Chemical mapping of a 207-nucleotide RNA with DMS and 2A3. The 2A3 profile rests on 1,319 reads. Conditions: 150 mM KOAc, 10 mM MgCl2 and 150 mM bicine (pH 8.5), 24 C.

RNA sequence: GGGAACGACUCGAGUAGAGUCGAAAAUGCAUCAUUGAAGGGAGCAAAAUGAAAUAAAGACCAACAGAAAAAGGACGUGCUCUGAACACGGGAUUGCGAAAUGUGAAUUUCAGUCAUUACCAAAAAUAACUAACACAAAUACUUUAUUAAGACGAGACUACGGCAUAAUAUUCGUAUUAUGCCGUAGAAAAGAAACAACAACAACAAC
Reactivity to DMS in 0.01 (KOAc 150mM, MgCl2 10mM, bicine 150mM(pH8.5), 24C), signal-to-noise 2, nucleotides 027 to 156: u010g000c000a120u000c030a110u000u000g010a130a080g050g020g000a110g060c040a050a110a090a090u010g010a080a090a120u010a000a090a110g000a130c040c030a110a180c000a090g030a080a080a110a060a070g000g000a150c030g010u000g020c030u000c080u010g020a070a030c010a060c080g040g040g010a070u000u010g050c000g000a040a030a100u000g010u030g010a120a070u000u000u000c040a060g000u000c050a010u020u000a080c020c070a010a040a040a040a050u010a050a110c030u020a030a090c030a140c060a030a050a080u000a030c080u000u000u020a030u000u000a020a070g010a030c050g010a180g010a240
Reactivity to 2A3 in 0.01 (KOAc 150mM, MgCl2 10mM, bicine 150mM(pH8.5), 24C), signal-to-noise 2, nucleotides 027 to 156: u090g010c000a030u030c020a030u040u060g060a080a030g020g000g000a030g030c010a010a000a070a190u130g060a020a090a010u100a050a090a010g040a040c030c020a030a030c040a130g180a060a060a010a010a030g040g000a010c010g020u020g000c000u020c020u050g010a040a020c020a010c040g060g020g000a020u030u120g040c040g040a050a000a060u100g030u060g040a050a080u050u040u050c030a010g030u040c010a020u020u090a030c010c000a040a030a040a010a030u110a020a060c080u080a110a020c010a000c020a100a060a130u220a060c020u060u120u080a010u070u100a060a080g050a030c140g020a000g000a010
The DMS profile rests on 2,500 reads.